[RMDB]
RNA sequence: GGGAACGACUCGAGUAGAGUCGAAAAGUCUGCUCCUUCGGGAGCAGACAAAAGCGUACUACUCCGGGAGUCGCAUCCUCGUGUCCCAAAUAGGACACGAUGAUGAACUACGACAUCGAUCGGAGUAUCGCAAAAGGAAAAUCGUUCGCGAUUUUCCCGUGAGUAGUCUCUUCGGAGACUACUCACGAAAAGAAACAACAACAACAAC
Reactivity to 2A3 in 0.01 (KOAc 150mM, MgCl2 10mM, bicine 150mM(pH8.5), 24C), signal-to-noise 1, nucleotides 027 to 156: g000u000c000u020g030c010u000c000c070u050u080c220g110g000g000a000g000c000a010g000a030c010a000a000a000a000g020c030g020u110a070c020u020a010c000u000c000c000g050g000g000a030g000u000c000g000c020a010u010c000c000u000c000g000u020g000u000c010c010c010a300a300a170u290a210g000g000a000c010a000c000g010a000u000g000a000u000g010a100a050c140u170a030c200g000a000c010a260u150c110g240a140u160c010g030g000a020g000u020a030u060c000g000c000a000a000a000a230g000g000a000a000a000a000u000c000g020u110u090c290g030c010g130a020u060u000u000u000c010c000
An RNA of 207 nucleotides, treated with 2A3 and read out base by base. The data come from the RNA Mapping Database (RMDB), library RNAMAK. The reactions ran in a buffer of 150 mM KOAc, 10 mM MgCl2 and 150 mM bicine (pH 8.5), at 24 C.